[RMDB]
RNA sequence: GGGAACGACUCGAGUAGAGUCGAAAAAUUAUCUAGGAUAAUCUCUUGCAUGUACAGUCAACUGAUUAUGGACUUUAAUGACAUCUAGCGACUCCUGGAUUAGUGUUUGAUUAUGUAAUUGGGGACUGCAGCCUAGCCAUACUGAUACAUCAAAAAGCACUGUACAGUUGUUCGCAACUGUACAGUGAAAAGAAACAACAACAACAAC
Reactivity to DMS in 0.01 (KOAc 150mM, MgCl2 10mM, bicine 150mM(pH8.5), 24C), signal-to-noise 2, nucleotides 027 to 156: a150u000u010a010u000c020u020a070g030g000a090u000a090a120u000c020u010c040u000u000g040c060a130u000g030u010a080c080a120g010u010c000a020a130c010u000g010a130u000u010a150u010g010g020a020c020u000u000u000a050a070u000g000a110c060a040u000c020u000a130g000c030g010a210c160u000c010c010u010g010g020a060u000u000a040g000u000g000u000u000u000g020a080u000u000a100u010g010u000a040a160u010u010g070g010g000g020a130c010u010g000c040a070g000c040c020u000a090g110c020c050a070u000a110c040u000g020a150u000a070c020a110u000c100a060a070a080a090a140g000
Reactivity to 2A3 in 0.01 (KOAc 150mM, MgCl2 10mM, bicine 150mM(pH8.5), 24C), signal-to-noise 3, nucleotides 027 to 156: a010u170u100a020u010c020u050a050g000g010a010u040a090a070u090c020u010c000u070u050g060c110a030u020g010u030a050c020a020g020u000c040a150a030c130u120g130a220u190u210a090u240g120g000a020c040u140u120u210a190a100u240g030a020c010a020u000c030u020a000g010c010g040a010c110u000c000c000u010g010g010a010u030u050a030g060u010g030u060u040u060g060a040u040u150a070u170g080u030a110a060u080u060g000g000g000g000a010c010u010g010c020a000g000c000c010u030a020g000c020c000a010u050a100c020u020g030a020u040a130c030a040u130c050a020a140a000a000a000g050